The record gives the reactivity of an RNA of 207 nucleotides to DMS and 2A3. Values cover nucleotides 27 to 156. DMS adducts were read by reverse transcription with MarathonRT.

RNA sequence: GGGAACGACUCGAGUAGAGUCGAAAAAUACAAGGGGAGGUUUCGGCCAAAUGUUGUAUGCAGAAAGCGUGAGGAAGGUAGCAUUUAGACACUCACGAGUAGCGGUUCGGCAGUAGUGCUAAAAUGAGACAGUACGAAAAGUUCGCUUUUCGUACAAGAAGUCUACAAGGUUCGCCUUGUAGACUUCAAAAGAAACAACAACAACAAC
Reactivity to DMS in 0.01 (KOAc 150mM, MgCl2 10mM, bicine 150mM(pH8.5), 24C), signal-to-noise 2, nucleotides 027 to 156: a070u000a070c030a100a060g010g010g000g020a110g020g000u000u000u000c010g010g030c040c020a030a050a130u000g020u020u010g000u000a110u010g000c010a140g010a070a110a090g020c060g020u000g010a050g040g020a090a060g020g020u000a100g000c060a140u000u010u000a170g000a120c050a090c040u000c030a080c070g000a080g020u000a040g050c050g020g020u000u010c070g040g000c030a100g000u020a000g020u000g000c020u000a030a020a060a080u000g000a100g030a150c100a100g010u000a000c000g000a010a010a020a030g010u000u000c300g020c000u000u000u000u000c000g010u000a010c010a040a100
Reactivity to 2A3 in 0.01 (KOAc 150mM, MgCl2 10mM, bicine 150mM(pH8.5), 24C), signal-to-noise 3, nucleotides 027 to 156: a000u150a020c020a040a040g030g000g000g020a030g020g040u040u070u100c030g040g000c010c000a090a070a040u120g020u080u040g020u060a060u070g000c000a000g100a110a080a000g050c030g020u030g010a040g010g050a050a010g060g000u060a020g020c000a020u050u060u040a030g010a030c010a000c060u030c020a020c040g010a020g010u070a020g040c020g020g080u090u060c010g030g000c030a010g000u080a040g010u010g000c010u050a040a040a000a090u050g000a010g020a040c060a080g000u000a000c000g000a000a020a000a000g010u020u060c070g030c110u020u000u010u000c000g000u000a000c000a010a010

About this RNA
2A3 adducts were read by reverse transcription with SuperScript II with manganese. The DMS profile rests on 4,237 reads.